The record gives the reactivity of an RNA of 177 nucleotides to 2A3 and DMS. The data come from the RNA Mapping Database (RMDB), library OK2TRN. For DMS the reverse transcriptase was MarathonRT. The reactions ran in a buffer of 150 mM KOAc, 10 mM MgCl2 and 150 mM bicine (pH 8.5), at 24 C. Values cover nucleotides 27 to 126. For 2A3 the reverse transcriptase was SuperScript II with manganese.

RNA sequence: GGGAACGACUCGAGUAGAGUCGAAAACAUGAUGGCUCAUGCCUGUAAUCUCAGCACUUUGAGAGGCCAAGGCAGGAAUAUCACUUGAAGGCAAGAGUUCGAGACCAGCCUGGGCAACAUAGUGAGACCAGGACGAAUCAUUCGUGAUUCGUCCUGGAAAAGAAACAACAACAACAAC
Reactivity to 2A3 in 0.01 (KOAc 150mM, MgCl2 10mM, bicine 150mM(pH8.5), 24C), signal-to-noise 1, nucleotides 027 to 126: c100a070u150g000a000u120g050g000c050u050c130a050u270g020c010c030u030g060u020a120a260u010c020u010c040a080g090c100a080c120u130u090u080g080a160g040a040g180g000c010c030a030a010g020g020c020a000g000g080a060a050u180a040u150c040a040c040u020u070g050a150a020g220g060c050a060a020g000a040g070u130u210c140g000a010g020a020c010c000a010g030c000c010u000g000g050g090c010a030a000c010a080u080a020g090u010g050a030g080a010
Reactivity to DMS in 0.01 (KOAc 150mM, MgCl2 10mM, bicine 150mM(pH8.5), 24C), signal-to-noise 1, nucleotides 027 to 126: c060a070u000g000a030u000g040g000c050u000c090a110u020g010c030c020u020g040u000a140a160u000c010u000c000a040g020c100a040c070u010u000u000g020a070g010a020g000g030c090c040a040a050g010g030c000a080g000g010a130a050u000a050u010c050a090c070u000u010g020a110a090g010g020c090a090a090g000a100g000u000u000c080g010a030g050a080c050c020a010g000c020c020u000g000g040g040c010a090a110c010a010u000a060g040u030g000a100g030a160
For DMS, 858 sequencing reads were counted.